[RMDB]
RNA sequence: GGGAACGACUCGAGUAGAGUCGAAAAGGGUGGCGAUGGCGGCGAACAGGGCCAUGGACACCACUCCCCGCGAGGGAUCCACCCAUGGGAGGAACCCCGCCGCCCAGCGCAUCACCUCGCCGAGCGCGGAAAUAGAGCGUUUCGACGCUCUAUUUCCAAAAGAAACAACAACAACAAC
Reactivity to 2A3 in 0.01 (KOAc 150mM, MgCl2 10mM, bicine 150mM(pH8.5), 24C), signal-to-noise 1, nucleotides 027 to 126: g050g020g010u020g030g000c030g050a050u040g030g000c020g010g000c010g040a110a070c150a110g000g060g000c020c000a030u020g000g000a030c030a010c040c050a140c040u010c020c000c000c010g150c110g050a300g060g000g000a050u070c020c030a020c000c010c020a030u050g010g040g010a240g030g090a100a130c020c000c000c000g030c020c010g000c000c000c000a020g000c020g000c040a090u130c000a030c060c020u060c000g100c050c050g080a100g010c140g050c060
Reactivity to DMS in 0.01 (KOAc 150mM, MgCl2 10mM, bicine 150mM(pH8.5), 24C), signal-to-noise 1, nucleotides 027 to 126: g000g050g020u000g000g000c020g010a030u000g000g010c000g010g000c000g000a180a150c230a190g000g000g000c000c010a010u000g000g000a020c090a040c090c000a160c210u010c040c050c010c120g000c120g010a140g000g000g000a020u010c110c230a100c090c000c000a070u000g000g010g040a050g010g020a110a300c030c020c090c000g060c020c010g000c040c000c070a080g040c000g020c000a070u000c070a000c010c010u000c010g000c030c040g010a060g020c190g000c160
Structure probing data (2A3 and DMS) for a 177-nucleotide construct. For DMS, 774 sequencing reads were counted. 2A3 adducts were read by reverse transcription with SuperScript II with manganese. The data come from the RNA Mapping Database (RMDB), library OK2TRN. For 2A3, 1,037 sequencing reads were counted.